Annotation
The record gives the reactivity of an RNA of 177 nucleotides to 2A3 and DMS. 2A3 adducts were read by reverse transcription with SuperScript II with manganese. Values are in units of 0.01, from 0 to 300, in steps of 10. Reactivities are given for positions 27 through 126.
RNA sequence: GGGAACGACUCGAGUAGAGUCGAAAAUGGCUACCAGGAUCCUUUGCAGAUCUCUGGGAUGUCAUUCACUCAUGCUUCUAUGCUGGGUGACUCCUACCAUCAUCACAUUCUUCCAAUUCUCCCAGUAUAUGAUUGUCUUAUUCGUAAGACAAUCAUAAAAAGAAACAACAACAACAAC
Reactivity to 2A3 in 0.01 (KOAc 150mM, MgCl2 10mM, bicine 150mM(pH8.5), 24C), signal-to-noise 9, nucleotides 027 to 126: u010g000g000c000u010a020c010c000a000g000g000a000u010c010c030u150u170u300g090c200a040g010a030u020c260u000c010u100g010g000g010a010u160g000u000c000a000u010u010c000a010c000u010c010a040u300g010c010u200u200c060u250a070u300g000c000u010g000g010g000u010g030a030c040u030c010c000u020a100c020c010a060u070c000a010u030c010a010c000a060u060u030c010u050u000c020c010a040a100u050u010c020u010c020c000c010a020g100u060a060
Reactivity to DMS in 0.01 (KOAc 150mM, MgCl2 10mM, bicine 150mM(pH8.5), 24C), signal-to-noise 9, nucleotides 027 to 126: u000g000g000c000u000a300c000c000a020g010g000a010u000c000c030u010u030u030g020c270a210g000a000u000c000u040c000u010g000g000g000a070u020g000u000c000a010u000u000c030a020c010u000c000a020u030g020c010u000u040c160u010a050u020g010c000u000g000g000g010u000g000a070c170u000c010c010u000a070c110c050a060u010c040a040u010c040a040c050a060u000u000c030u000u000c030c030a050a140u010u000c070u000c010c010c030a140g010u020a140
The reactions ran in a buffer of 150 mM KOAc, 10 mM MgCl2 and 150 mM bicine (pH 8.5), at 24 C.